[RMDB]
RNA sequence: GGGAACGACUCGAGUAGAGUCGAAAACGAUACUGCAUUGAUCGCCUGUAGACUAUAGCAGCGUCGCAUGGUCGAUGCUUGUAGUCUGUAUUAGUGUUCGACCAUGAUACUAAGGCGAUCAAUGCAAGGUACUGCAUGAUUUCGAUCGUGUAGUACCAAAAGAAACAACAACAACAAC
Reactivity to DMS in 0.01 (KOAc 150mM, MgCl2 10mM, bicine 150mM(pH8.5), 24C), signal-to-noise 9, nucleotides 027 to 126: c050g010a120u050a070c180u000g000c000a000u000u000g000a010u000c000g010c000c000u000g010u020a090g010a030c020u010a040u010a070g030c210a060g000c060g030u000c010g000c020a180u030g010g010u030c000g010a010u010g000c000u000u000g010u000a010g010u010c050u020g000u000a030u010u000a020g020u010g010u010u020c150g000a110c150c060a040u000g010a050u010a020c050u010a070a020g000g010c000g000a000u000c000a010a000u000g000c000a010a000
Reactivity to 2A3 in 0.01 (KOAc 150mM, MgCl2 10mM, bicine 150mM(pH8.5), 24C), signal-to-noise 9, nucleotides 027 to 126: c020g010a030u070a070c030u020g000c000a000u000u000g000a000u000c000g000c000c000u010g020u040a010g010a020c010u010a010u030a060g110c070a010g020c010g010u000c000g000c040a130u150g070g020u180c000g000a000u000g000c000u000u020g010u000a010g030u020c030u040g060u000a030u010u020a030g070u010g070u040u080c050g020a020c020c020a020u040g000a000u010a010c040u070a050a010g000g000c000g000a000u000c000a000a000u000g000c000a000a000

The record gives the reactivity of an RNA of 177 nucleotides to DMS and 2A3. The RNA was probed in 150 mM KOAc, 10 mM MgCl2 and 150 mM bicine (pH 8.5) at 24 C. For DMS the reverse transcriptase was MarathonRT. The data come from the RNA Mapping Database (RMDB), library OK1LIB. The DMS profile rests on 66,084 reads.